Chemical mapping of a 177-nucleotide RNA with DMS and 2A3. It was measured as part of the RMDB library OK1LIB. The reactions ran in a buffer of 150 mM KOAc, 10 mM MgCl2 and 150 mM bicine (pH 8.5), at 24 C.

[RMDB]
RNA sequence: GGGAACGACUCGAGUAGAGUCGAAAACGGCGCCGCGGCCAACAUGACUGGGACCGCGUCAUGUCUGCACAGUGUCGAUACCCAUCCGCCCAACCGCCACGAGACCGCGUCGAUCUGGAGCCGCCGGCUCGUCGUCCUCAUUCGUGAGGACGACGAGAAAAGAAACAACAACAACAAC
Reactivity to DMS in 0.01 (KOAc 150mM, MgCl2 10mM, bicine 150mM(pH8.5), 24C), signal-to-noise 2, nucleotides 027 to 126: c100g020g010c040g020c040c060g000c060g000g020c030c020a110a060c110a070u030g000a090c020u020g010g010g000a130c050c040g010c200g020u000c020a030u030g020u000c080u000g020c060a080c050a080g010u020g040u000c030g000a060u000a100c030c000c000a070u020c050c010g000c020c040c040a080a110c070c020g040c040c000a090c060g000a060g000a060c040c010g010c010g040u020c030g000a060u040c080u010g000g020a070g000c000c010g000c030c050g000g000
Reactivity to 2A3 in 0.01 (KOAc 150mM, MgCl2 10mM, bicine 150mM(pH8.5), 24C), signal-to-noise 5, nucleotides 027 to 126: c040g030g000c030g000c020c020g100c100g050g030c030c020a020a020c030a060u100g050a050c060u040g030g040g090a060c040c040g070c020g010u000c020a020u050g050u020c040u060g020c050a050c010a030g030u040g030u110c020g010a030u140a170c000c000c010a020u050c020c010g020c020c010c000a040a070c040c000g070c040c020a030c020g060a060g010a050c040c000g010c020g050u060c020g050a100u010c010u040g020g020a010g020c000c030g050c010c020g050g000